The record gives the reactivity of an RNA of 177 nucleotides to DMS.
RNA sequence: GGGAACGACUCGAGUAGAGUCGAAAAGAUAUGGACCCAUAUAGCUAUAAUCGUACUGGAUCGGAAACGAUCUUACGGUAGCUAUGUGGGUCCUAAGUCGCAAAACAGGUUGCUUCGGCAACCUGAAUCACGGACAGAACUUCGGUUCUGUCCGUGAAAAAGAAACAACAACAACAAC
Reactivity to DMS in 0.01 (KOAc 150mM, MgCl2 10mM, bicine 150mM(pH8.5), 24C), signal-to-noise 1, nucleotides 027 to 126: g000a030u010a300u010g010g020a010c000c000c000a000u010a000u000a000g060c000u000a280u030a240a000u000c000g000u050a020c300u030g010g000a010u010c010g000g000a090a060a140c010g000a010u000c000u000u000a000c000g010g000u000a000g010c010u000a000u000g050u000g010g000g030u010c000c000u000a000a050g010u000c010g040c270a080a090a220a200c010a000g000g000u000u000g010c000u010u030c300g010g000c000a010a000c000c000u000g000a020a030